An RNA of 177 nucleotides, treated with DMS and 2A3 and read out base by base. The data come from the RNA Mapping Database (RMDB), library RFM100. Reactivities are rounded to 0.1 and cut off at 0 and 3. Conditions: 150 mM KOAc, 10 mM MgCl2 and 150 mM bicine (pH 8.5), 24 C.

[RMDB]
RNA sequence: GGGAACGACUCGAGUAGAGUCGAAAAAGGAUGGUGGCACCGGGGUUGGUAACCACGCGCACUUCACCAAUGGUGGAGUCGUAGACCCCAUGGAACCGCAGCCAGAUGACAAACAGCAGGGCUGCGUGGCCAUCUGAAAUUUCGAUUUCAGAUGGCCAAAAGAAACAACAACAACAAC
Reactivity to DMS in 0.01 (KOAc 150mM, MgCl2 10mM, bicine 150mM(pH8.5), 24C), signal-to-noise 2, nucleotides 027 to 126: a140g030g030a030u000g030g060u010g010g030c000a130c050c060g000g000g000g000u000u000g010g090u020a030a080c050c110a190c110g000c140g000c140a000c020u040u010c020a030c020c000a160a170u000g000g020u000g000g000a000g000u000c020g000u000a110g020a110c020c000c000c020a090u010g000g000a190a000c240c010g000c020a050g000c000c010a030g020a030u000g000a020c260a100a040a120c270a050g000c110a140g040g010g020c010u000g000c000g020u010
Reactivity to 2A3 in 0.01 (KOAc 150mM, MgCl2 10mM, bicine 150mM(pH8.5), 24C), signal-to-noise 2, nucleotides 027 to 126: a000g180g000a060u140g010g020u020g010g060c020a000c100c040g000g000g000g000u020u030g030g040u110a030a020c010c030a020c020g010c000g020c030a050c040u000u000c000a000c000c020a110a170u250g000g000u000g000g020a000g000u000c010g000u010a010g010a070c000c000c000c020a040u040g030g010a040a010c000c060g000c000a000g000c000c020a070g030a230u110g020a070c080a060a270a020c110a090g130c060a090g020g020g020c000u010g020c020g010u020